Conditions: 150 mM KOAc, 10 mM MgCl2 and 150 mM bicine (pH 8.5), 24 C.
An RNA of 177 nucleotides, treated with 2A3 and DMS and read out base by base.

RNA sequence: GGGAACGACUCGAGUAGAGUCGAAAAAUGUGUGGUUACCCGCGCCUGAAUAUAUAGGGCGUGUGGAGGGAACGUGGGGAAGUGAAACAUCUCAGUACCCACAGGAAGAGAAAACAACAUGUGAUUCUAAAUACGCGUCAUUCGUGACGCGUAUUUAAAAAGAAACAACAACAACAAC
Reactivity to 2A3 in 0.01 (KOAc 150mM, MgCl2 10mM, bicine 150mM(pH8.5), 24C), signal-to-noise 2, nucleotides 027 to 126: a000u060g060u010g020u040g020g130u080u040a040c000c000c000g000c000g010c000c000u030g070a140a040u190a080u110a020u070a210g000g000g020c000g020u000g000u070g020g000a030g000g000g000a130a030c090g030u030g000g010g000g000a040a040g100u070g150a030a010a250c100a300u010c000u020c000a000g000u000a030c000c000c000a010c000a000g030g040a060a090g020a000g070a000a060a000a000c010a030a010c020a060u070g160u150g040a160u150u030c000
Reactivity to DMS in 0.01 (KOAc 150mM, MgCl2 10mM, bicine 150mM(pH8.5), 24C), signal-to-noise 4, nucleotides 027 to 126: a030u020g010u020g030u020g010g000u020u020a210c020c020c000g000c000g020c000c000u000g000a230a090u020a180u010a100u010a190g000g000g000c020g030u010g010u020g010g000a230g000g000g000a190a110c100g000u020g000g010g030g010a090a280g000u040g010a070a140a140c150a140u000c040u010c030a090g000u000a170c020c000c000a000c030a020g000g000a140a110g000a240g020a050a050a030a070c080a120a020c080a070u030g000u000g000a170u010u000c060
Reactivities are given for positions 27 through 126. It was measured as part of the RMDB libraries RFM100 and RFMREP. For 2A3 the reverse transcriptase was SuperScript II with manganese. For DMS the reverse transcriptase was MarathonRT.